[RMDB]
RNA sequence: GGGAACGACUCGAGUAGAGUCGAAAACAGUUGUCUGCUGAAUGUGCUUACUCUCACUGGCCCACAUGGAUAUUUCGUGCUUCUCAUACGACUGCUUGGAGCUGCCCUUAACAGGAACCAGGCUUCCAUUGAGCUAUGUAUUCGUACAUAGCUCAAUAAAAGAAACAACAACAACAAC
Reactivity to DMS in 0.01 (KOAc 150mM, MgCl2 10mM, bicine 150mM(pH8.5), 24C), signal-to-noise 9, nucleotides 027 to 126: c070a090g000u000u000g020u000c060u000g010c050u000g010a120a080u010g020u000g020c050u000u000a100c080u010c040u000c060a080c080u000g010g000c020c010c040a100c130a050u010g010g000a080u000a060u000u000u000c070g020u000g010c050u000u000c020u000c060a120u000a090c080g000a060c100u000g010c030u000u000g010g010a090g010c050u000g000c070c020c020u000u010a070a130c190a070g000g010a060a070c050c030a080g010g010c050u000u000c030c090
Reactivity to 2A3 in 0.01 (KOAc 150mM, MgCl2 10mM, bicine 150mM(pH8.5), 24C), signal-to-noise 4, nucleotides 027 to 126: c010a020g010u070u040g050u120c050u050g030c020u020g080a120a080u120g050u050g060c010u040u050a070c000u010c000u010c080a030c040u030g040g010c010c040c010a050c020a080u080g050g030a030u020a120u150u100u110c050g020u040g030c020u040u010c040u000c030a050u040a120c050g040a050c040u030g020c010u030u040g040g010a030g000c040u050g030c040c000c000u040u040a100a020c030a050g010g020a020a020c030c000a030g060g000c000u030u010c020c000
Conditions: 150 mM KOAc, 10 mM MgCl2 and 150 mM bicine (pH 8.5), 24 C.
Chemical mapping of a 177-nucleotide RNA with DMS and 2A3.
It was measured as part of the RMDB library OK2TST.
2A3 is a SHAPE reagent: it acylates the 2'-hydroxyl of flexible nucleotides of all four kinds.